Chemical mapping of a 177-nucleotide RNA with DMS and 2A3.

RNA sequence: GGGAACGACUCGAGUAGAGUCGAAAAGAAAGAAUGGGAAGGAUUUGAUCAGUCAGGCUUCUGGCUAUAUUUCAGGACUCAUCUGGUCCUGGGUAUAAUCAAAGCCCGACUGUAUGGUAGUAAAGAAACCGGAGAAGGAGUUCGCUCCUUCUCCGGUAAAAGAAACAACAACAACAAC
Reactivity to DMS in 0.01 (KOAc 150mM, MgCl2 10mM, bicine 150mM(pH8.5), 24C), signal-to-noise 1, nucleotides 027 to 126: g080a120a110a240g000a140a030u010g030g030g000a000a030g010g000a120u010u000u000g000a180u000c100a000g000u010c000a030g000g000c000u000u020c300u020g010g010c030u020a000u000a000u000u030u000c020a040g000g000a010c000u030c170a200u010c280u050g010g010u000c000c000u000g000g000g020u000a010u040a000a000u000c000a000a050a040g000c010c000c050g020a010c010u000g000u010a000u000g000g010u010a020g020u050a050a140a070g020a130a140
Reactivity to 2A3 in 0.01 (KOAc 150mM, MgCl2 10mM, bicine 150mM(pH8.5), 24C), signal-to-noise 2, nucleotides 027 to 126: g130a020a100a000g080a080a020u100g000g040g000a030a030g070g000a100u040u010u200g030a040u150c030a000g030u000c010a050g000g000c000u020u130c100u080g010g000c020u000a000u000a000u020u080u230c000a000g010g000a000c000u020c240a240u070c300u300g090g000u000c000c000u010g000g000g050u010a000u000a000a010u020c020a000a000a010g020c000c000c010g000a030c000u000g000u000a000u010g000g000u030a090g080u070a000a000a150g070a000a130
About this RNA: It was measured as part of the RMDB library RFM100. 2A3 adducts were read by reverse transcription with SuperScript II with manganese.